[RMDB]
This 177-nucleotide RNA was probed chemically with DMS and 2A3. Values cover nucleotides 27 to 126. The reactions ran in a buffer of 150 mM KOAc, 10 mM MgCl2 and 150 mM bicine (pH 8.5), at 24 C. The DMS profile rests on 6,215 reads.
RNA sequence: GGGAACGACUCGAGUAGAGUCGAAAAAAUGCGAACUUUGGCGAACAACAUUUCAUCAGGCUCGUCAUCAUCUUCUUGCCCUUCAGGAACCGGCUUGAAGUCCAGCAGAAUGGCUUGUUCGCCGUUCGGUACGAAGGAUAUUCGUAUCCUUCGUACCAAAAGAAACAACAACAACAAC
Reactivity to DMS in 0.01 (KOAc 150mM, MgCl2 10mM, bicine 150mM(pH8.5), 24C), signal-to-noise 5, nucleotides 027 to 126: a080a030u010g010c050g000a020a030c070u010u010u010g000g010c000g010a010a020c030a040a040c080a060u000u000u010c070a140u000c120a120g010g020c030u010c090g010u010c080a090u000c130a060u010c030u000u000c020u000u010g010c020c020c040u010u000c080a110g010g000a090a100c150c140g010g020c000u000u000g000a020a050g010u010c080c080a060g020c080a110g000a040a020u000g010g000c170u000u000g010u000u010c020g020c010c000g020u000u000c040
Reactivity to 2A3 in 0.01 (KOAc 150mM, MgCl2 10mM, bicine 150mM(pH8.5), 24C), signal-to-noise 6, nucleotides 027 to 126: a000a000u260g020c040g020a040a020c030u140u160u300g010g000c010g010a010a000c020a010a010c010a060u060u120u180c050a120u040c050a050g170g010c040u030c060g100u020c060a070u040c010a040u010c020u030u000c000u010u040g000c000c010c000u040u090c060a040g140g020a100a090c030c030g050g010c010u010u020g010a020a000g030u030c030c010a020g030c010a010g050a100a030u040g070g060c080u010u020g000u000u010c000g010c010c020g000u010u010c010